Source information:
An RNA of 207 nucleotides, treated with 2A3 and DMS and read out base by base. It was measured as part of the RMDB library M2RFPK. 2A3 adducts were read by reverse transcription with SuperScript II with manganese.
RNA sequence: GGGAACGACUCGAGUAGAGUCGAAAAUUAAUACUGCUACAUGUUUAAGACCCUUAGUUAUUUAGCUUUACCGCCCAGGAUGGGGUGCAGCGUUCCUGCAAUAUCCAGGGCACCUAGGUGCAGCCUUCAUGCCUCAUGCCGUUCGCGGCAUGAGGAACGUACUGAUUAUGUUCGCAUAAUCAGUACGAAAAGAAACAACAACAACAAC
Reactivity to 2A3 in 0.01 (KOAc 150mM, MgCl2 10mM, bicine 150mM(pH8.5), 24C), signal-to-noise 4, nucleotides 027 to 156: u130u060a020a060u070a100c050u030g060c020u070a040c070a120u080g060u100u150u100a060a040g070a100c000c010c010u050u070a060g060u060u100a160u180u120u100a030g010c020u060u060u020a020c030c020g000c000c000c000a010g020g010a010u020g030g030g050g040u030g000c000a010g010c040g060u090u110c000c000u010g000c020a020a030u020a020u070c000c010a010g010g010g000c000a060c010c020u050a030g020g020u070g070c040a030g050c010c010u090u150c060a090u170g050c000c000u000c000a000u000g020c020c000g030u040u060c260g030c020g090g000c000a000u000g000a000g000g000a000a000
Reactivity to DMS in 0.01 (KOAc 150mM, MgCl2 10mM, bicine 150mM(pH8.5), 24C), signal-to-noise 1, nucleotides 027 to 156: u010u010a040a040u000a050c020u000g010c020u000a130c060a050u000g010u000u000u010a080a090g000a110c010c020c000u000u000a110g020u000u000a100u000u000u020a120g020c050u000u000u000a050c050c110g050c040c020c020a080g030g020a040u010g010g000g020g020u000g020c020a020g020c060g020u000u010c030c000u000g000c050a040a170u000a070u000c020c010a110g000g000g060c030a030c150c030u020a100g000g020u000g010c030a070g000c050c080u000u000c040a080u000g020c000c010u010c010a020u000g040c000c020g030u000u000c300g040c050g000g000c010a010u000g030a000g000g010a000a030

The 2A3 profile rests on 2,793 reads. Reactivities are given for positions 27 through 156. Conditions: 150 mM KOAc, 10 mM MgCl2 and 150 mM bicine (pH 8.5), 24 C.